[RMDB]
RNA sequence: GGGAACGACUCGAGUAGAGUCGAAAACACAUGUUGAGUAGUCCUGAUUAUCAGAUUCGCUGGAGUGCAGGCCGGAUGAUACAAGCCCUGUCCUCCCAUGACGCUGGUGAGGGGCAGUGUGGGGAGGCAAUAAAUGUUGGUUCGCCAACAUUUAUUGAAAAGAAACAACAACAACAAC
Reactivity to 2A3 in 0.01 (KOAc 150mM, MgCl2 10mM, bicine 150mM(pH8.5), 24C), signal-to-noise 9, nucleotides 027 to 126: c060a010c010a060u140g030u110u120g110a090g020u110a010g030u060c000c020u040g040a120u060u130a090u150c040a020g090a160u100u090c060g020c070u050g010g020a040g030u070g020c010a010g020g000c020c030g090g020a060u090g010a010u060a140c060a090a040g010c020c010c000u020g040u030c000c000u000c000c000c000a030u140g040a010c020g000c020u020g010g060u100g050a060g010g000g000g000c010a010g010u000g000u030g020g010g000g000a010g010g000
Reactivity to DMS in 0.01 (KOAc 150mM, MgCl2 10mM, bicine 150mM(pH8.5), 24C), signal-to-noise 9, nucleotides 027 to 126: c080a100c140a080u000g010u000u000g010a120g010u000a090g010u000c030c020u000g000a130u010u000a070u000c070a050g000a120u000u000c090g020c070u000g000g010a080g020u000g010c040a060g010g010c050c070g000g000a070u000g010a120u010a060c140a070a120g000c090c020c020u000g000u010c050c010u000c010c000c030a080u010g010a050c060g010c040u000g000g010u010g010a080g010g010g000g000c020a020g010u000g020u000g010g010g000g010a040g000g000

Description:
Chemical mapping of a 177-nucleotide RNA with 2A3 and DMS. The 2A3 profile rests on 39,169 reads. The data come from the RNA Mapping Database (RMDB), library OK2TRN. The reactions ran in a buffer of 150 mM KOAc, 10 mM MgCl2 and 150 mM bicine (pH 8.5), at 24 C.